[RMDB]
RNA sequence: GGGAACGACUCGAGUAGAGUCGAAAAUCAGCAGGAGGUAAAUGUACUGAACAAUUAUAGCUGCAUAUUUGUUUUCUUGAAGCAAGCAGUAGAACAAUGAAAAUAUAACAGUUAUGUUUUGACUUUUUAUCUUUCAUUUUGCUUUAUUUGGUGAUUGAUACAUAACGUAAUUCGUUACGUUAUGUAUAAAAGAAACAACAACAACAAC
Reactivity to DMS in 0.01 (KOAc 150mM, MgCl2 10mM, bicine 150mM(pH8.5), 24C), signal-to-noise 4, nucleotides 027 to 156: u000c060a070g020c030a090g020g010a080g020g020u000a040a100a090u000g010u000a140c050u010g000a060a110c020a070a090u000u000a110u000a100g020c020u010g010c030a130u000a100u000u000u000g010u000u000u000u040c030u000u010g000a130a160g020c050a100a140g020c040a080g030u000a060g010a030a070c030a030a050u000g000a030a010a030a040u000a040u010a060a040c100a030g020u000u000a060u010g000u000u000u000u010g010a080c030u000u000u000u000u000a020u010c070u010u000u000c010a060u000u000u010u010g010c030u000u000u000a040u040u000u010g030g010u010g020a140u000u000g010
Reactivity to 2A3 in 0.01 (KOAc 150mM, MgCl2 10mM, bicine 150mM(pH8.5), 24C), signal-to-noise 8, nucleotides 027 to 156: u070c020a000g030c010a010g000g040a010g000g030u040a030a070a060u080g020u050a100c030u050g050a090a020c040a080a050u220u120a090u120a120g020c030u030g000c050a030u040a120u140u070u060g040u030u050u040u060c030u020u080g070a040a010g040c030a040a020g000c030a040g040u140a030g040a070a020c040a030a010u070g020a030a010a060a010u100a010u040a030a020c020a010g010u030u040a070u110g070u050u110u110u110g020a020c010u060u080u020u050u060a030u020c000u010u060u010c020a060u060u160u100u070g040c010u090u120u150a160u130u110u100g050g010u070g050a080u110u110g010

Notes:
Structure probing data (DMS and 2A3) for a 207-nucleotide construct. 2A3 adducts were read by reverse transcription with SuperScript II with manganese. The 2A3 profile rests on 5,635 reads.